[RMDB]
RNA sequence: GGGAACGACUCGAGUAGAGUCGAAAACGAUGGAUAACUGAUCUUAUUUUUUCUUGAUUGAAAUAGCAUAUUUCAAUUCACACAAAAAAUAGGAUUAGUCUGCCCAUUUUUCACUUAUACAUCAUUCCGAGCAAACUCGAUUCGUCGAGUUUGCUCGAAAAGAAACAACAACAACAAC
Reactivity to 2A3 in 0.01 (KOAc 150mM, MgCl2 10mM, bicine 150mM(pH8.5), 24C), signal-to-noise 2, nucleotides 027 to 126: c090g000a020u040g020g020a030u050a140a010c000u000g010a000u030c010u000u000a000u020u000u000u000u000u020c060u090u080g010a000u000u000g000a000a000a000u130a110g120c140a200u140a030u220u010u020c000a010a010u180u100c010a040c010a000c030a010a000a000a000a000a000u010a000g000g000a000u010u000a000g000u000c070u040g050c000c000c000a000u010u050u000u010u010c050a080c120u030u140a080u100a250c060a070u070c000a020u170u000c020